An RNA of 177 nucleotides, treated with 2A3 and DMS and read out base by base. The reactions ran in a buffer of 150 mM KOAc, 10 mM MgCl2 and 150 mM bicine (pH 8.5), at 24 C.
RNA sequence: GGGAACGACUCGAGUAGAGUCGAAAACACCCGCAAUUCGUUGCGGGUGAGAGCACCACUCCUGCGGGAGUUAAGGCCAUUCGGACAGCCGGGUGCAAAGCCAUAGCAGGUCCUUCGGGACCUGCAAACCUUUAUCAUAUUUCGAUAUGAUAAAGGUAAAAGAAACAACAACAACAAC
Reactivity to 2A3 in 0.01 (KOAc 150mM, MgCl2 10mM, bicine 150mM(pH8.5), 24C), signal-to-noise 1, nucleotides 027 to 126: c000a000c000c000c000g000c000a000a040u120u130c170g070u070u020g020c020g000g000g000u000g000a000g000a020g000c000a010c010c000a030c000u020c000c000u060g040c240g090g000g000a010g010u030u150a130a000g000g000c000c000a060u070u120c060g030g030a040c010a010g030c010c000g030g020g010u000g000c010a040a000a000g010c020c000a030u080a050g020c000a000g000g020u040c000c000u050u070c240g080g010g000a000c000c000u030g000c000a020a010
Reactivity to DMS in 0.01 (KOAc 150mM, MgCl2 10mM, bicine 150mM(pH8.5), 24C), signal-to-noise 1, nucleotides 027 to 126: c010a020c000c000c020g020c010a000a020u000u020c150g010u000u000g010c010g040g000g040u000g000a010g000a070g000c000a010c010c010a090c000u000c000c010u000g010c180g050g000g010a020g000u000u010a040a060g000g020c000c000a120u000u000c230g000g000a060c040a190g000c010c030g000g020g000u000g030c000a040a040a110g000c030c030a070u000a140g010c010a010g020g000u000c000c000u000u000c160g000g000g000a010c000c000u000g000c010a010a050
For DMS, 1,616 sequencing reads were counted. For 2A3 the reverse transcriptase was SuperScript II with manganese.